Chemical mapping of a 177-nucleotide RNA with 2A3 and DMS. It was measured as part of the RMDB library OK1LIB. The reactions ran in a buffer of 150 mM KOAc, 10 mM MgCl2 and 150 mM bicine (pH 8.5), at 24 C. The 2A3 profile rests on 11,186 reads. For 2A3 the reverse transcriptase was SuperScript II with manganese. Reactivities are rounded to 0.1 and cut off at 0 and 3.
[RMDB]
RNA sequence: GGGAACGACUCGAGUAGAGUCGAAAAGGAUCGUUGGCACGCAUCGAUGCUAUGCGUUCUCGCUUCGCAUGGCAUCUAAUAUGCAGAUAUGCGUGAUGCGUGGAGCGCGUAGGACGAUCGAAAGAAAGGGUAAUACUAUCUUCGGAUAGUAUUACCCAAAAGAAACAACAACAACAAC
Reactivity to 2A3 in 0.01 (KOAc 150mM, MgCl2 10mM, bicine 150mM(pH8.5), 24C), signal-to-noise 8, nucleotides 027 to 126: g120g010a020u020c010g000u030u050g080g060c010a000c000g010c000a010u010c010g010a010u000g010c010u010a000u000g010c000g030u050u040c090u020c100g130c280u040u020c000g000c000a000u000g010g000c000a000u000c000u010a020a020u040a020u090g000c000a010g080a220u170a090u190g020c000g020u010g010a010u010g000c000g000u020g010g010a070g040c150g000c040g080u130a060g070g070a000c000g000a010u070c080g030a090a110a000g160a060a070a030
Reactivity to DMS in 0.01 (KOAc 150mM, MgCl2 10mM, bicine 150mM(pH8.5), 24C), signal-to-noise 4, nucleotides 027 to 126: g010g010a000u000c010g000u000u010g010g010c020a030c000g000c020a010u000c020g000a000u000g000c000u000a010u000g000c010g020u010u020c050u030c160g010c120u010u000c000g000c000a010u000g000g020c000a000u000c010u010a050a050u020a030u010g000c010a030g020a120u070a080u010g010c000g020u010g000a020u000g000c000g020u000g010g000a090g010c050g000c050g000u020a070g000g010a010c030g000a000u000c010g010a100a100a070g000a150a140a100